[RMDB]
RNA sequence: GGGAACGACUCGAGUAGAGUCGAAAACGCGAUGGAUACGUCCAUCGCGAAUCCGUCCAAGCCGCGGACGUUAAACUGUGGCACGGUUGUGCCUAGGUGCAACCCUGCUCUUAAUGGCGGCACCCCUGCCCAAGCUACCGUCUACGGACGGUAGCAAGUGGGUAAAUGGAUUCGUCCAUUUACCCACAAAAGAAACAACAACAACAAC
Reactivity to 2A3 in 0.01 (KOAc 150mM, MgCl2 10mM, bicine 150mM(pH8.5), 24C), signal-to-noise 4, nucleotides 027 to 156: c000g010c010g000a000u010g010g000a000u030a070c230g090u050c010c000a000u010c000g000c000g000a000a010u010c020c000g010u010c000c000a070a030g000c000c010g000c020g000g000a010c000g010u000u030a020a020a040c070u090g040u270g090g000c000a000c010g010g000u010u020g000u020g020c010c030u090a170g080g070u000g000c000a000a000c000c010c000u010g000c000u030c030u080u230a150a100u170g040g000c000g000g010c010a120c000c010c000c020u040g050c040c020c020a030a030g000c000u010a000c000c000g000u000c000u020a030c240g110g000a000c000g010g010u000a000g000c000a010a000